[RMDB]
RNA sequence: GGGAACGACUCGAGUAGAGUCGAAAAGUGGCGUUGACCCAGAAAUUAUUGAGGUAGCUCUGGACGUUGCCUGCGCCUUACUUGUCAGUAUUGCUGGUGGUUCUGUGGAAUCCGCCCGCACUUUGAUUGGAUCUGCGCCAAGCAUGCCUCAAAUCCAUAGUAAAUAGUGGUUCGCCACUAUUUACUAAAAAGAAACAACAACAACAAC
Reactivity to DMS in 0.01 (KOAc 150mM, MgCl2 10mM, bicine 150mM(pH8.5), 24C), signal-to-noise 4, nucleotides 027 to 156: g010u010g000g040c030g030u000u000g020a300c030c010c010a220g000a090a090a090u010u000a100u000u000g010a060g030g030u000a080g030c070u000c070u000g030g010a090c060g000u010u000g000c030c020u010g000c050g000c010c010u000u000a030c060u010u010g000u000c040a110g020u010a070u000u000g020c020u000g030g010u000g020g030u000u000c020u010g020u010g050g000a050a050u010c010c050g010c000c010c050g010c020a030c080u010u000u010g000a120u000u020g010g010a100u000c040u000g030c040g060c230c020a040a080g020c020a060u000g010c010c000u000c030a020a070a120u000c050c040a210
Reactivity to 2A3 in 0.01 (KOAc 150mM, MgCl2 10mM, bicine 150mM(pH8.5), 24C), signal-to-noise 6, nucleotides 027 to 156: g050u030g020g020c030g020u050u120g060a140c010c000c030a040g140a020a140a050u300u220a110u050u100g010a000g010g000u020a010g010c010u060c150u110g020g030a100c040g030u040u090g080c020c030u040g020c040g030c010c000u030u130a110c040u070u130g050u050c020a040g040u060a120u090u070g010c000u020g000g010u010g000g020u050u000c030u090g140u250g200g060a060a020u060c010c020g010c000c010c010g010c000a020c030u050u090u060g020a040u030u080g010g010a040u020c010u050g010c000g000c020c000a000a000g020c030a060u130g010c000c010u020c010a020a040a030u040c070c020a090
Source: RMDB library OK3TST, as collected in RNAgym. Chemical mapping of a 207-nucleotide RNA with DMS and 2A3. The 2A3 profile rests on 6,273 reads. For 2A3 the reverse transcriptase was SuperScript II with manganese. The reactions ran in a buffer of 150 mM KOAc, 10 mM MgCl2 and 150 mM bicine (pH 8.5), at 24 C.